The record gives the reactivity of an RNA of 177 nucleotides to 2A3 and DMS. The data come from the RNA Mapping Database (RMDB), library TTRDES. Values cover nucleotides 27 to 126. For DMS the reverse transcriptase was MarathonRT. High 2A3 reactivity points to a flexible backbone, as in loops and unpaired stretches. Conditions: 150 mM KOAc, 10 mM MgCl2 and 150 mM bicine (pH 8.5), 24 C.

RNA sequence: GGGAACGACUCGAGUAGAGUCGAAAAGAUAUGGACAUUCGUUAACGGGAUGAUGACCAAGCUCGGAAACGAGCUUGCAAGUCCCGAGACGAGAUGUCCUAAGUCAAAGGGCCUCUUCGGAGGCCCACCAAUUUAUCAGGUUCGCCUGAUAAAUUGGAAAAGAAACAACAACAACAAC
Reactivity to 2A3 in 0.01 (KOAc 150mM, MgCl2 10mM, bicine 150mM(pH8.5), 24C), signal-to-noise 4, nucleotides 027 to 126: g040a050u110a090u190g000g000a010c000a020u030u000c030g030u040u090a300a210c050g010g020g000a020u030g070a160u110g000a030c060c050a010a000g000c000u020c010g040g030a050a120a090c010g000a000g020c000u000u010g010c040a090a150g010u000c000c010c000g010a010g000a000c010g030a040g050a160u020g000u000c000c000u010a130a030g060u030c070a090a060a180g030g000g000c030c010u000c010u040u120c300g200g000a000g000g010c000c010c010a010
Reactivity to DMS in 0.01 (KOAc 150mM, MgCl2 10mM, bicine 150mM(pH8.5), 24C), signal-to-noise 4, nucleotides 027 to 126: g000a100u000a300u000g000g000a000c010a020u000u000c000g000u000u000a120a230c060g020g000g010a010u010g000a090u020g000a200c300c010a000a010g020c000u000c000g020g000a130a110a270c000g010a020g010c010u010u010g000c000a030a080g010u000c000c020c000g020a220g000a020c010g000a070g010a010u000g020u000c000c000u000a010a130g000u000c070a070a140a150g010g020g010c000c000u010c000u000u000c150g020g000a000g010g000c000c000c000a000